[RMDB]
RNA sequence: GGGAACGACUCGAGUAGAGUCGAAAAAGUUAGGUUCGCUAUGGUGCAACUCUUUAAGGCAAUAACAAACUAAUUCUAAGCAAGUAAUGGAGAAAUGCCAGGGUCACUAUCUAGCCAUAAUAGUGCUGUAAGUGACUUAGAUUCGUCUAAGUCACAAGGCACUAUGAAGAUUCGUCUUCAUAGUGCCAAAAGAAACAACAACAACAAC
Reactivity to 2A3 in 0.01 (KOAc 150mM, MgCl2 10mM, bicine 150mM(pH8.5), 24C), signal-to-noise 7, nucleotides 027 to 156: a000g100u080u070a040g000g030u050u060c040g000c040u070a020u060g020g000u020g020c040a060a090c020u030c030u070u150u130a100a040g010g000c010a050a050u110a130a040c040a080a070a030c030u100a040a070u140u090c040u120a080a030g070c060a080a030g060u130a090a130u120g050g020a070g040a070a120a010u050g010c010c000a000g020g000g000u010c000a000c040u010a040u120c020u020a010g020c010c010a020u040a160a060u040a100g100u070g050c040u020g050u140a190a100g000u000g000a000c000u000u000a000g000a000u010u020c090g010u000c100u000a010a000g000u010c000a000c000a000a010
Reactivity to DMS in 0.01 (KOAc 150mM, MgCl2 10mM, bicine 150mM(pH8.5), 24C), signal-to-noise 3, nucleotides 027 to 156: a080g010u000u010a040g010g010u010u000c070g040c040u010a060u010g040g030u000g010c020a080a100c050u000c020u000u000u010a060a090g000g010c020a070a080u010a080a130c070a040a060a090c050u000a060a110u000u000c070u000a090a140g020c040a060a080g020u000a080a070u000g020g010a120g000a080a120a100u010g000c020c030a100g020g010g010u000c030a050c020u000a030u000c050u000a040g000c020c040a090u010a050a080u000a080g000u000g010c020u010g040u000a100a120g030u000g010a020c010u010u010a020g000a080u000u010c300g020u000c000u000a000a020g000u000c010a000c000a060a130
Chemical mapping of a 207-nucleotide RNA with 2A3 and DMS. The data come from the RNA Mapping Database (RMDB), library M2RFPK. Reactivities are given for positions 27 through 156. The 2A3 profile rests on 7,191 reads. Conditions: 150 mM KOAc, 10 mM MgCl2 and 150 mM bicine (pH 8.5), 24 C.